The record gives the reactivity of an RNA of 177 nucleotides to DMS and 2A3. For 2A3 the reverse transcriptase was SuperScript II with manganese. It was measured as part of the RMDB library M2PK50. The RNA was probed in 150 mM KOAc, 10 mM MgCl2 and 150 mM bicine (pH 8.5) at 24 C. The 2A3 profile rests on 1,365 reads. Values cover nucleotides 27 to 126.
[RMDB]
RNA sequence: GGGAACGACUCGAGUAGAGUCGAAAAAGCCAAUCCUUCGGGAUUGGCUACAGCAACGAAGCAAAGCAACGAGACAAGUCGAGCAAAAGAUCGAGCAUGCUACACACCCCAUCUUCGGAUGGGGUAAUAACGUCGUUUUAUUCGUAAAACGACGUUAAAAAGAAACAACAACAACAAC
Reactivity to DMS in 0.01 (KOAc 150mM, MgCl2 10mM, bicine 150mM(pH8.5), 24C), signal-to-noise 2, nucleotides 027 to 126: a060g010c010c000a000a000u000c000c000u000u000c200g020g020g000a000u020u000g020g000c000u010a020c020a090g000c060a100a090c090g040a160a090g000c060a050a030a070g000c050a050a060c040g000a020g000a090c090a040a050g000u020c050g010a060g040c070a080a040a060a100g010a030u000c030g000a090g000c050a120u000g000c060u000a080c150a110c150a060c000c000c000c000a020u000c000u000u000c230g030g000a000u000g010g020g000g000u010a010a020
Reactivity to 2A3 in 0.01 (KOAc 150mM, MgCl2 10mM, bicine 150mM(pH8.5), 24C), signal-to-noise 1, nucleotides 027 to 126: a000g000c000c000a000a000u020c020c000u020u060c260g040g000g000a000u000u000g000g020c000u000a000c000a020g000c000a070a000c030g090a100a000g010c060a130a030a030g000c010a050a110c030g010a020g040a060c060a090a000g070u070c030g040a000g070c010a080a010a040a100g060a030u030c010g010a000g080c000a060u090g020c030u090a030c060a010c000a020c100c040c000c000a000u000c000u030u050c200g040g000a000u000g010g040g020g000u000a000a000